[RMDB]
RNA sequence: GGGAACGACUCGAGUAGAGUCGAAAAAGCCAGAAUUGGCCUGUAAAAUCUACAUUUGGAUAUUGAAGUCUAAAUCUGUUCAACUAGCUUACACUAGAUGGAGAUAUUUUCAUAUUCAGAUACACUGGAAUGUAUGAUCUAGCCAUGCGUAAUAUAGGAUCAUGCAAUGAUUCGUCAUUGCAUGAUCAAAAGAAACAACAACAACAAC
Reactivity to DMS in 0.01 (KOAc 150mM, MgCl2 10mM, bicine 150mM(pH8.5), 24C), signal-to-noise 3, nucleotides 027 to 156: a080g000c020c040a090g010a110a160u000u000g030g000c040c070u000g010u000a060a060a100a090u000c010u010a020c020a060u010u010u000g010g000a080u000a050u000u000g010a050a090g030u000c040u000a040a070a040u000c050u000g020u010u010c030a020a110c010u000a030g010c010u010u000a120c110a000c010u010a000g010a170u020g000g000a070g010a060u010a030u000u000u000u000c020a030u000a110u000u000c000a120g010a060u000a060c030a120c050u000g020g010a030a040u010g010u000a030u000g010a060u000c020u000a070g010c020c020a070u000g020c050g030u010a040a090u010a150u000a170g000
Reactivity to 2A3 in 0.01 (KOAc 150mM, MgCl2 10mM, bicine 150mM(pH8.5), 24C), signal-to-noise 6, nucleotides 027 to 156: a000g080c050c000a050g090a130a150u140u060g010g000c000c020u040g030u060a050a080a030a110u030c020u050a050c040a070u000u040u070g020g000a010u020a020u060u160g010a020a010g060u000c050u140a060a110a110u010c020u040g160u080u090c020a040a020c010u010a010g030c050u160u190a040c050a020c060u010a000g010a050u020g040g000a040g000a000u010a100u080u100u000u010c010a020u020a050u040u020c010a000g030a080u080a090c080a060c090u070g040g060a040a010u030g000u040a030u160g030a020u050c040u050a020g010c000c020a030u070g010c020g060u100a090a100u210a090u120a200g130
Structure probing data (DMS and 2A3) for a 207-nucleotide construct. 2A3 adducts were read by reverse transcription with SuperScript II with manganese.